Chemical mapping of a 177-nucleotide RNA with 2A3 and DMS. For DMS the reverse transcriptase was MarathonRT. For 2A3, 1,796 sequencing reads were counted.
[RMDB]
RNA sequence: GGGAACGACUCGAGUAGAGUCGAAAAGCAUCACUGUUCGCAGUGAUGCAAAGGUACAAAAACAUGCAAAAGGAGAAAAGUCCAAAGUACCAAAGCAUGAAAAAAUCCCUACCUUCGGGUAGGGAAAGAUAUAACGGAACUUCGGUUCCGUUAUAUCAAAAGAAACAACAACAACAAC
Reactivity to 2A3 in 0.01 (KOAc 150mM, MgCl2 10mM, bicine 150mM(pH8.5), 24C), signal-to-noise 1, nucleotides 027 to 126: g020c000a020u010c000a000c010u000g040u080u100c160g000c110a000g000u000g000a010u000g000c000a020a000a000g030g000u070a040c090a030a120a020a080a030c000a010u010g010c000a000a050a100a100g040g050a130g060a090a250a040a000g040u020c020c000a090a030a020g060u030a040c020c030a000a090a000g010c010a000u040g070a110a070a010a010a010a060u040c000c000c000u000a000c000c000u010u060c280g180g000g000u000a010g000g000g000a000a000a000
Reactivity to DMS in 0.01 (KOAc 150mM, MgCl2 10mM, bicine 150mM(pH8.5), 24C), signal-to-noise 2, nucleotides 027 to 126: g020c000a000u010c000a000c000u010g000u020u010c160g050c010a000g030u010g000a000u020g010c000a000a040a040g010g000u030a030c080a090a110a040a100a110c050a020u010g000c030a060a020a120a170g000g000a050g020a070a120a100a080g010u000c030c010a110a110a060g000u010a050c020c010a040a080a120g020c030a000u000g000a010a020a050a080a080a090u000c000c000c000u000a010c000c000u000u030c200g030g030g000u000a000g000g000g000a000a030a010